This 177-nucleotide RNA was probed chemically with DMS and 2A3. Conditions: 150 mM KOAc, 10 mM MgCl2 and 150 mM bicine (pH 8.5), 24 C. In probing experiments dimethyl sulfate is read out at A N1 and C N3, which are open when not base-paired.
RNA sequence: GGGAACGACUCGAGUAGAGUCGAAAAAUAGCGCUCGUCUGCGUUCUGUCAGGGCCUGUUUUGGUAAUGCCUUUCUUUCUGUUAUGCGCUACGCUGAUCGUCUGAGUAUAUGGCCUGGCCAUGCUGCUUACACAUCAUUAUUCGUAAUGAUGUGUAAAAAAGAAACAACAACAACAAC
Reactivity to DMS in 0.01 (KOAc 150mM, MgCl2 10mM, bicine 150mM(pH8.5), 24C), signal-to-noise 9, nucleotides 027 to 126: a070u010a060g010c090g010c020u010c070g010u010c050u000g010c050g010u010u010c050u000g010u000c060a100g010g000g010c030c020u000g010u010u000u000u010g010g010u010a070a090u010g010c040c030u000u000u000c030u010u000u010c060u010g000u010u010a070u010g010c050g010c030u000a050c100g010c040u000g010a090u010c060g010u000c040u000g000a090g010u010a080u010a070u010g010g000c020c050u010g010g010c030c030a050u010g010c050u000g010c160
Reactivity to 2A3 in 0.01 (KOAc 150mM, MgCl2 10mM, bicine 150mM(pH8.5), 24C), signal-to-noise 9, nucleotides 027 to 126: a000u120a010g030c020g010c020u020c030g090u030c070u060g020c020g040u070u040c030u070g080u050c050a070g010g040g030c000c020u060g090u040u090u050u070g080g010u110a100a050u120g030c010c000u030u090u040c020u020u080u010c030u050g090u090u080a070u140g040c040g000c020u040a050c040g010c040u040g030a100u050c020g050u000c050u040g040a030g080u050a070u020a040u210g020g000c000c050u020g030g000c010c010a020u060g010c020u030g010c000
For 2A3 the reverse transcriptase was SuperScript II with manganese.